RNA sequence: GGGAACGACUCGAGUAGAGUCGAAAAAUAAAGCGUAAUGGCAUCCCAGUAGCAAAGAGCAGCGUAAAGGCGAAAGCCGAACUCAAGAUCGCAUCGGGCUAAGAUGCGAUCGUAGCCACGCAAAAAACUUAGUUAUCGUCUUCGGACGAUAACUAAGAAAAGAAACAACAACAACAAC
Reactivity to DMS in 0.01 (KOAc 150mM, MgCl2 10mM, bicine 150mM(pH8.5), 24C), signal-to-noise 2, nucleotides 027 to 126: a080u000a070a020a100g010c040g040u000a090a070u010g000g040c040a200u000c030c000c000a080g000u000a060g010c120a020a090a060g020a090g010c060a130g010c120g010u000a020a060a190g010g000c000g000a090a040a110g010c010c020g040a010a090c050u000c040a060a090g000a020u000c000g010c000a040u000c000g010g020g010c160u030a110a160g000a010u000g000c020g000a000u000c010g000u000a070g000c070c030a040c080g000c010a020a060a070a070a020a080
Reactivity to 2A3 in 0.01 (KOAc 150mM, MgCl2 10mM, bicine 150mM(pH8.5), 24C), signal-to-noise 1, nucleotides 027 to 126: a000u180a020a070a040g010c020g000u050a080a100u090g090g010c010a040u020c030c000c020a030g080u110a010g000c070a020a190a070g090a060g020c100a030g010c030g140u180a170a000a040g000g040c010g050a040a020a020g000c000c010g020a030a020c020u040c050a050a060g000a020u010c010g000c000a000u010c000g060g090g050c060u070a100a020g000a000u000g000c000g010a000u000c000g020u000a000g000c000c000a000c000g000c000a080a130a000a080a000a000